Source information
Conditions: 150 mM KOAc, 10 mM MgCl2 and 150 mM bicine (pH 8.5), 24 C. This 207-nucleotide RNA was probed chemically with 2A3. The 2A3 profile rests on 532 reads.
[RMDB]
RNA sequence: GGGAACGACUCGAGUAGAGUCGAAAAAAGUGACCUCUGUGUCCUCAUUGCUCAUUAUUUGCUGAUUAUAACGUAUUAGCAUGCUAAAGGACACUCCUACCAGCGCCAUGAGAGUUUACAAAUGCUAUGGCAACAUCAGGAAAUUACUCUAUAUGGACACCGCUCCAUAUUUCGAUAUGGAGCGGUGAAAAGAAACAACAACAACAAC
Reactivity to 2A3 in 0.01 (KOAc 150mM, MgCl2 10mM, bicine 150mM(pH8.5), 24C), signal-to-noise 2, nucleotides 027 to 156: a040a060g110u050g010a060c020c010u000c090u070g000u010g050u030c010c000u020c050a080u000u070g000c010u000c110a180u090u290a130u100u140u060g030c040u030g030a050u070u090a160u150a300a080c150g020u110a030u020u010a030g000c020a000u070g000c000u090a130a000a000g030g000a000c010a000c000u020c000c000u040a100c020c040a010g000c040g010c050c000a030u040g110a010g010a010g000u030u050u130a120c100a050a160a050u100g030c050u150a010u020g070g010c060a060a020c040a090u230c030a020g000g100a000a040a080u080u000a010c000u010c030u090a070u110a060u300g030g010a010
Reactivities are given for positions 27 through 156.